[RMDB]
RNA sequence: GGGAACGACUCGAGUAGAGUCGAAAAUGUCAUGUUUCGACAUGACAAAAAAGCGUACUACAAGCUAAGUAGCGUUGAAAGAACUACUUGGUCCCAAAUAGGACCAAGCUGGAGCUACGAUGCUUGUAUCGCAAAAAACCAUGGUUCGCCAUGGUAACUCAGCACAAUUCUUCGGAAUUGUGCUGAGAAAAGAAACAACAACAACAAC
Reactivity to 2A3 in 0.01 (KOAc 150mM, MgCl2 10mM, bicine 150mM(pH8.5), 24C), signal-to-noise 1, nucleotides 027 to 156: u040g020u010c000a010u000g060u010u070u020c070g000a010c000a020u000g000a000c000a000a090a000a000a000a000g080c090g050u160a090c000u000a010c040a000a000g000c000u100a170a000g000u000a000g000c040g130u110u220g060a070a140a090g010a020a020c030u140a000c000u170u000g000g000u030c000c000c000a220a300a090u260a130g000g000a000c000c000a000a000g010c010u030g000g040a070g070c000u000a000c000g020a000u040g000c000u000u000g000u000a010u000c010g000c000a040a040a040a040a040a040c000c000a000u000g000g010u070u040c250g010c040c000a000u000g010g060u050a000a000

The record gives the reactivity of an RNA of 207 nucleotides to 2A3.
The RNA was probed in 150 mM KOAc, 10 mM MgCl2 and 150 mM bicine (pH 8.5) at 24 C.
Reactivities are given for positions 27 through 156.
It was measured as part of the RMDB library RNAMAK.